[RMDB]
RNA sequence: GGGAACGACUCGAGUAGAGUCGAAAAUCGUGAGAUGUGGUGCCUCACGCGCUCGAGGCGUCCGUGGUCAGAGAGACCACUGACGCAAAAACUCGAGCGCAAAUAAAACGCAUUACAUGGAGAAUAAAUGACUAAAUACUUUCGAGUAUUUAGUCAUAAAAGAAACAACAACAACAAC
Reactivity to DMS in 0.01 (KOAc 150mM, MgCl2 10mM, bicine 150mM(pH8.5), 24C), signal-to-noise 7, nucleotides 027 to 126: u020c050g010u020g020a150g000a050u030g020u000g000g020u010g010c010c070u020c100a070c120g020c010g000c000u000c000g000a010g010g000c000g000u000c000c080g010u000g000g010u000c010a190g010a180g010a230g010a010c000c000a010c010u000g000a000c010g040c030a030a020a080a110a300c010u000c000g000a000g010c000g020c010a000a030a060u020a060a040a080a120c270g000c010a010u000u000a010c030a070u010g010g010a120g000a130a090u020a050a110
Reactivity to 2A3 in 0.01 (KOAc 150mM, MgCl2 10mM, bicine 150mM(pH8.5), 24C), signal-to-noise 7, nucleotides 027 to 126: u140c040g010u020g040a070g000a040u180g010u010g010g020u000g000c010c000u070c010a060c090g000c000g000c000u000c000g000a000g010g000c000g000u000c000c000g000u000g000g000u000c030a030g120a060g020a010g000a300c000c000a000c000u000g000a000c000g000c000a060a090a060a040a050c010u000c000g000a000g000c000g000c000a000a000a000u070a000a040a000a010c040g000c000a000u020u030a020c010a050u110g140g070a160g060a160a080u180a160a200